[RMDB]
RNA sequence: GGGAACGACUCGAGUAGAGUCGAAAAUGACCUUCACAACCUCAGAGCGGGUGGUGCUGACUUGUGAGCUCUCAAGGGUGGACUUCCCGGCAACCUGGUACAAGGAUGGGCAGAAGGUGGAGGAGAGGUCUUUGUACUUCUUCGGAAGUACAAAGACAAAAGAAACAACAACAACAAC
Reactivity to DMS in 0.01 (KOAc 150mM, MgCl2 10mM, bicine 150mM(pH8.5), 24C), signal-to-noise 3, nucleotides 027 to 126: u020g010a120c030c020u010u000c030a110c060a090a080c060c010u000c060a060g010a090g020c070g000g010g030u000g000g050u000g000c060u000g010a090c060u000u020g000u010g010a160g010c090u010c040u010c080a070a060g000g020g040u000g000g010a070c090u000u000c020c010c040g020g000c100a080a030c030c020u010g010g040u010a080c150a090a060g010g000a080u000g020g010g010c080a080g010a070a070g020g010u000g020g000a110g010g010a080g000a100g010
Reactivity to 2A3 in 0.01 (KOAc 150mM, MgCl2 10mM, bicine 150mM(pH8.5), 24C), signal-to-noise 1, nucleotides 027 to 126: u050g060a060c000c000u070u030c040a020c010a060a100c020c010u040c050a030g040a020g100c070g030g000g020u040g010g040u080g000c040u030g060a090c000u040u050g040u040g110a060g090c080u000c000u000c130a020a040g060g010g050u030g010g080a060c010u060u020c030c000c000g000g000c020a020a070c000c030u050g020g020u070a080c080a080a000g050g030a060u080g040g000g000c030a070g040a130a000g050g020u040g000g000a030g010g020a050g010a010g020